Annotation:
Chemical mapping of a 177-nucleotide RNA with 2A3 and DMS. DMS adducts were read by reverse transcription with MarathonRT. It was measured as part of the RMDB library TTRDES. The reactions ran in a buffer of 150 mM KOAc, 10 mM MgCl2 and 150 mM bicine (pH 8.5), at 24 C. Values cover nucleotides 27 to 126. The DMS profile rests on 27,445 reads.
[RMDB]
RNA sequence: GGGAACGACUCGAGUAGAGUCGAAAAGAUAUGGAACCGUGUUUCGCGAUAAGAAGCAUUCGGAAACGAAUGGCUUCUUUUGACGCGAAAUUAACGGUUCCUAAGUCAAAAGUUACCUUCGGGUAACCGAUUAGUAUUUCUUCGGAAAUACUAAUCGAAAAGAAACAACAACAACAAC
Reactivity to 2A3 in 0.01 (KOAc 150mM, MgCl2 10mM, bicine 150mM(pH8.5), 24C), signal-to-noise 5, nucleotides 027 to 126: g010a020u080a040u200g000g010a010a000c000c010g000u010g010u010u000u000c010g000c000g010a040u010a110a000g010a010a000g000c000a000u000u010c010g020g060a100a090a030c020g020a000a010u060g280g050c000u010u000c020u010u010u010u040g050a020c010g000c000g010a000a000a010u050u050a070a000c010g000g000u000u000c000c000u000a010a010g010u000c020a070a020a050a150g000u000u000a010c010c000u030u070c300g180g000g000u010a010a010c020
Reactivity to DMS in 0.01 (KOAc 150mM, MgCl2 10mM, bicine 150mM(pH8.5), 24C), signal-to-noise 9, nucleotides 027 to 126: g010a050u010a300u000g000g010a000a000c000c000g060u000g010u000u000u000c000g030c000g010a160u000a020a010g010a010a000g010c000a040u000u000c000g010g000a150a100a230c010g010a010a010u000g020g010c000u000u000c000u000u000u000u010g010a230c080g010c000g000a010a010a000u000u010a120a010c010g020g000u000u000c000c000u000a010a100g010u010c040a100a090a140a150g000u000u000a000c000c000u000u010c220g020g010g010u000a000a010c010